[RMDB]
RNA sequence: GGGAACGACUCGAGUAGAGUCGAAAAACGCUCAUUCGCUUGAUCAAUUGUUUAGAGCGCCCCAGUUCUGGCGAAGUUUUAGUCAAUGGGGUCAAUCUGUUAAACUUAAAGCCUAAAGAAUUGCAACCGGUCUAGUAAGAUUCGUCUUACUAGACCGAAAAGAAACAACAACAACAAC
Reactivity to DMS in 0.01 (KOAc 150mM, MgCl2 10mM, bicine 150mM(pH8.5), 24C), signal-to-noise 2, nucleotides 027 to 126: a180c150g030c040u000c020a130u000u000c090g030c080u000u010g020a170u020c090a080a050u000u010g010u000u000u000a020g000a090g020c040g020c010c000c000c020a020g010u000u000c110u000g010g010c020g010a150a100g020u000u010u010u000a110g010u000c070a080a070u000g010g000g030g000u020c140a070a060u010c060u000g010u010u000a080a100a090c140u010u000a030a060a130g000c020c020u010a020a060a040g010a020a000u000u000g010c090a120a060c190
Reactivity to 2A3 in 0.01 (KOAc 150mM, MgCl2 10mM, bicine 150mM(pH8.5), 24C), signal-to-noise 2, nucleotides 027 to 126: a000c010g010c000u050c000a060u120u050c040g060c100u090u220g050a140u240c080a010a140u100u020g050u090u130u100a050g010a000g020c010g010c000c020c000c000a020g060u120u050c040u090g010g000c010g030a090a030g070u130u090u020u150a020g020u040c010a080a070u030g010g040g050g010u020c010a020a070u060c000u050g150u130u120a080a070a010c000u010u070a130a060a000g000c000c000u090a120a090a010g020a040a010u090u070g030c000a050a100c060
About this RNA
An RNA of 177 nucleotides, treated with DMS and 2A3 and read out base by base. The reactions ran in a buffer of 150 mM KOAc, 10 mM MgCl2 and 150 mM bicine (pH 8.5), at 24 C. It was measured as part of the RMDB library OK2TST.